RNA sequence: GGGAACGACUCGAGUAGAGUCGAAAACACACAGCGCGGCGAGCGCGCACGCGGCGACAGGGCACCCAGCGAAGCAAGCGAGGCUUCGGCCUCGCAAAAGAAACAACAACAACAAC
Reactivity to 2A3 in 0.01 (KOAc 150mM, MgCl2 10mM, bicine 150mM(pH8.5), 24C), signal-to-noise 2, nucleotides 027 to 095: c030a000c010a010c010a020g020c030g000c010g060g010c020g050a050g050c050g000c010g000c020a020c050g060c010g070g020c030g030a060c040a070g020g030g040c030a050c010c020c030a020g040c040g090a080a010g050c040a020a030g020c000g010a000g010g000c020u030u020c100g050g020c010c000u000c000g000c000a020
Reactivity to DMS in 0.01 (KOAc 150mM, MgCl2 10mM, bicine 150mM(pH8.5), 24C), signal-to-noise 2, nucleotides 027 to 095: c060a020c130a070c090a070g000c040g000c040g000g020c070g000a080g020c020g000c040g010c050a050c060g020c040g000g030c030g030a060c100a050g020g000g030c080a120c020c000c010a100g030c050g000a070a070g000c170a080a070g040c010g000a030g010g020c020u000u020c080g000g000c010c000u000c040g000c000a000